[RMDB]
RNA sequence: GGGAACGACUCGAGUAGAGUCGAAAAAGACCUCCCUCGGCACGAGGAUGUGCCUGAUUUUGAAUGGGGGAGGAUGUCACGGACAAAUUCCGUGACCAUGUUAGGCCUCAUUGAAGAGCGUACCUAGCUGCGUUUCAACCUGCGUGGGUUGAGGCGAUCUACACCGCGUGUUCGCACGCGGUGUAGAAAAAGAAACAACAACAACAAC
Reactivity to 2A3 in 0.01 (KOAc 150mM, MgCl2 10mM, bicine 150mM(pH8.5), 24C), signal-to-noise 2, nucleotides 027 to 156: a000g160a030c000c020u000c010c000c000u000c020g000g000c020a000c040g070a050g290g090a140u300g030u100g010c010c160u180g150a300u050u060u280u290g300a270a280u110g020g000g000g000g000a000g010g000a020u080g020u000c000a000c010g000g010a030c100a090a210a090u230u010c010c000g000u000g000a000c000c000a020u160g000u000u000a000g040g010c040c000u020c000a050u020u300g030a300a160g000a030g070c060g160u030a080c010c010u000a010g030c030u000g000c000g020u000u030u000c000a000a000c000c000u230g040c170g300u300g000g010g010u000u040g010a000g000g030c030g000a000